[RMDB]
RNA sequence: GGGAACGACUCGAGUAGAGUCGAAAAGAUAUGGAUUGGGACAUGUUCGAGUGUCGGAAACGACACGAGAACAACAGCCCACUGUCCUAAGUCAAAAGCAGAUGGUCACUUCGGUGACCAUCUGCAACGAUACUUAACCGUUCGCGGUUAAGUAUCGAAAAGAAACAACAACAACAAC
Reactivity to 2A3 in 0.01 (KOAc 150mM, MgCl2 10mM, bicine 150mM(pH8.5), 24C), signal-to-noise 3, nucleotides 027 to 126: g040a020u120a070u210g040g010a030u000u090g010g010g040a050c130a170u070g030u020u000c030g010a030g010u010g000u020c000g010g070a130a070a030c010g000a000c000a040c020g000a000g010a010a000c020a010a010c030a040g040c010c020c000a010c040u060g030u030c010c000u020a110a060g110u120c070a060a000a060a090g000c010a010g000a010u010g010g000u020c000a020c070u110u220c300g100g000u020g010a000c000c000a000u000c000u000g000c010a000a000
Reactivity to DMS in 0.01 (KOAc 150mM, MgCl2 10mM, bicine 150mM(pH8.5), 24C), signal-to-noise 6, nucleotides 027 to 126: g000a090u010a290u000g010g000a050u010u000g000g010g000a050c050a180u010g000u000u000c000g000a300g030u010g000u000c000g010g000a080a050a180c000g020a010c000a000c000g000a300g010a010a010c010a020a070c270a090g000c010c000c020a070c300u000g010u000c000c010u000a050a130g010u000c070a060a070a110a160g020c000a010g010a010u000g000g010u000c000a010c010u010u000c220g020g010u000g000a000c000c000a000u000c000u000g000c000a010a040
This 177-nucleotide RNA was probed chemically with 2A3 and DMS.
Values are in units of 0.01, from 0 to 300, in steps of 10.
It was measured as part of the RMDB library TTRDEL.
The RNA was probed in 150 mM KOAc, 10 mM MgCl2 and 150 mM bicine (pH 8.5) at 24 C.
2A3 adducts were read by reverse transcription with SuperScript II with manganese.